Conditions: 150 mM KOAc, 10 mM MgCl2 and 150 mM bicine (pH 8.5), 24 C. The record gives the reactivity of an RNA of 177 nucleotides to DMS and 2A3.

RNA sequence: GGGAACGACUCGAGUAGAGUCGAAAACCGUGCUUGCCGGGCUUUGCAUCCCUAGCCGGUCGAAGGGGCCGCUGGGGUUAAAACUCGCAAGUUCCGGUGACAGAUCGGGGAAAAAAUCUCGGGAGCACCGAGUUAUUGAUUUCGAUCAAUAACUCGGAAAAGAAACAACAACAACAAC
Reactivity to DMS in 0.01 (KOAc 150mM, MgCl2 10mM, bicine 150mM(pH8.5), 24C), signal-to-noise 1, nucleotides 027 to 126: c000c000g030u000g000c060u000u020g000c010c010g000g000g010c070u010u020u010g020c030a100u060c000c000c000u010a030g000c100c030g020g050u000c000g010a190a120g000g010g010g000c000c050g000c000u000g000g060g000g000u000u040a030a020a120a190c120u010c020g000c030a060a020g020u000u020c120c010g030g030u000g020a000c050a070g000a070u020c030g000g000g000g050a000a050a070a080a070a070u010c000u000c000g010g010g010a080g000c140a100
Reactivity to 2A3 in 0.01 (KOAc 150mM, MgCl2 10mM, bicine 150mM(pH8.5), 24C), signal-to-noise 3, nucleotides 027 to 126: c000c000g010u030g000c010u030u060g070c020c010g000g010g020c030u050u040u100g000c010a060u070c000c000c000u000a010g070c170c100g060g000u010c020g110a280a110g280g040g010g010c000c000g030c000u020g000g000g000g000u000u030a020a020a020a030c070u100c110g000c000a000a000g000u120u180c000c000g000g000u010g010a040c030a020g050a040u100c030g000g020g000g060a000a060a000a010a070a180u030c000u010c000g020g020g030a040g060c020a010